[RMDB]
RNA sequence: GGGAACGACUCGAGUAGAGUCGAAAACUCAGCUCUUGGCUGCUCAGCGAGCCAAGAUUGAGCAGCGUCUUGCAGUUCAAAAGGCAGCGUUGGAAGCUGGCAGGGAUGCUGCUGGCUACCAUGCAGCAGCCGGAGAAGCAGAUAAUGAGGGGGUGCGAUGCUUGAAUCAUUUCGAUGAUUCAAGCAUAAAAGAAACAACAACAACAAC
Reactivity to DMS in 0.01 (KOAc 150mM, MgCl2 10mM, bicine 150mM(pH8.5), 24C), signal-to-noise 2, nucleotides 027 to 156: c010u000c010a100g010c030u000c020u000u020g050g000c000u000g000c010u000c090a210g000c020g030a180g000c030c000a060a100g000a190u000u000g000a070g030c000a060g000c030g020u000c090u000u000g000c030a110g000u000u010c040a080a060a140a190g020g030c000a120g010c060g010u000u000g030g040a130a080g010c010u000g000g010c000a050g020g010g040a120u010g030c010u030g020c010u000g000g010c030u010a040c040c010a120u000g020c030a100g070c030a050g020c000c000g060g010a040g000a050a110g030c030a100g010a130u000a080a100u020g000a090g020g020g030g000g000u010g000c010g020
Reactivity to 2A3 in 0.01 (KOAc 150mM, MgCl2 10mM, bicine 150mM(pH8.5), 24C), signal-to-noise 3, nucleotides 027 to 156: c020u020c020a040g000c040u000c010u110u300g040g000c000u010g030c010u050c090a080g030c080g120a050g020c000c010a050a030g100a100u030u060g010a010g000c020a020g010c010g070u120c100u090u240g000c030a050g000u020u050c030a080a090a040a010g010g000c000a010g010c070g030u020u050g050g010a030a000g000c010u030g010g000c010a020g040g030g120a110u200g140c010u000g000c000u000g000g000c000u040a120c010c010a030u090g020c030a020g000c000a010g000c000c000g010g020a010g010a030a020g000c020a020g040a110u210a140a130u290g070a170g000g020g000g010g000u030g010c050g020